Source: RMDB library OK3TST, as collected in RNAgym. Chemical mapping of a 207-nucleotide RNA with DMS and 2A3. For 2A3 the reverse transcriptase was SuperScript II with manganese. As a SHAPE reagent, 2A3 marks flexible, mostly unpaired nucleotides at the ribose 2'-OH. The reactions ran in a buffer of 150 mM KOAc, 10 mM MgCl2 and 150 mM bicine (pH 8.5), at 24 C. DMS adducts were read by reverse transcription with MarathonRT.
RNA sequence: GGGAACGACUCGAGUAGAGUCGAAAAGUUUCUGUACAAGACAUUAGGAAUUGUACUUUGACUGUACUCAAGAAACAAUAUAAAAAAAGAGACUUGAGAUAAAGUAAAUGGGGCUGGAGAGAUGGCUCAGCCGUGAAAGGCUAGGCUCACAACCAAAACCAUUAAUAUGGUUCGCCAUAUUAAUGGUAAAAGAAACAACAACAACAAC
Reactivity to DMS in 0.01 (KOAc 150mM, MgCl2 10mM, bicine 150mM(pH8.5), 24C), signal-to-noise 1, nucleotides 027 to 156: g000u000u000u010c050u000g000u020a040c020a000a100g030a300c010a250u050u000a070g030g010a030a240u020u000g030u000a000c050u000u000u000g000a030c010u000g000u010a130c010u000c020a040a050g010a210a100a210c060a040a090u020a260u050a050a010a070a220a050a190a300g010a200g000a200c080u000u000g000a080g000a220u000a100a050a110g000u000a060a080a180u000g000g010g010g010c070u020g030g000a020g030a080g000a050u000g010g010c060u000c010a070g000c000c030g020u010g000a070a160a130g060g030c000u000a050g000g000c020u000c020a100c070a060a060c020c010a010a060a110
Reactivity to 2A3 in 0.01 (KOAc 150mM, MgCl2 10mM, bicine 150mM(pH8.5), 24C), signal-to-noise 3, nucleotides 027 to 156: g000u000u010u000c010u020g010u000a000c000a000a080g060a030c050a160u280u290a160g070g100a070a030u040u020g000u020a010c000u010u020u090g050a030c020u040g020u140a050c020u000c020a040a000g130a180a130a020c040a110a020u130a010u250a160a150a060a000a010a050a000g030a010g010a020c010u030u000g010a010g030a100u100a050a160a000g020u040a010a070a160u070g020g020g010g020c030u040g040g000a020g010a000g010a070u110g010g010c000u030c130a010g010c010c010g020u050g070a100a080a030g010g000c000u000a000g010g000c040u040c020a060c000a010a050c040c040a010a190a000